Conditions: 150 mM KOAc, 10 mM MgCl2 and 150 mM bicine (pH 8.5), 24 C. The record gives the reactivity of an RNA of 177 nucleotides to DMS and 2A3. Reactivities are given for positions 27 through 126.
[RMDB]
RNA sequence: GGGAACGACUCGAGUAGAGUCGAAAACAAGGAGGUCAGGUUUGGGCCUACAUCCCGGGGACAGGGGCGGCCAUGGCGGCGGCAGCCAGGGAGGAGGAGGAGGAGGCGGCUCGGGAGUCAGCCGCCUCAUGCAAUUAUGUUUCGACAUAAUUGCAUGAAAAGAAACAACAACAACAAC
Reactivity to DMS in 0.01 (KOAc 150mM, MgCl2 10mM, bicine 150mM(pH8.5), 24C), signal-to-noise 7, nucleotides 027 to 126: c180a130a140g010g010a050g010g020u000c050a070g010g010u000u000u010g030g020g000c020c020u000a060c090a110u000c020c000c000g020g000g000g000a130c160a110g000g000g000g020c070g000g020c040c040a110u010g020g020c080g030g020c100g000g010c060a080g010c030c030a090g000g010g000a120g000g000a110g000g000a110g000g010a150g000g000a050g010g010c000g000g000c010u010c060g010g000g010a140g000u000c100a050g000c000c000g010c000c000u000
Reactivity to 2A3 in 0.01 (KOAc 150mM, MgCl2 10mM, bicine 150mM(pH8.5), 24C), signal-to-noise 3, nucleotides 027 to 126: c070a050a050g080g010a020g010g070u060c060a060g060g090u150u210u180g160g030g000c010c000u030a030c020a060u030c000c000c000g000g010g000g010a090c080a130g020g000g040g060c060g040g000c040c010a050u080g100g000c070g000g020c030g030g020c030a030g040c020c010a010g030g000g010a130g000g020a050g020g010a070g000g020a060g000g030a010g000g030c020g020g000c010u030c030g070g030g000a060g060u060c010a000g000c000c010g020c010c000u010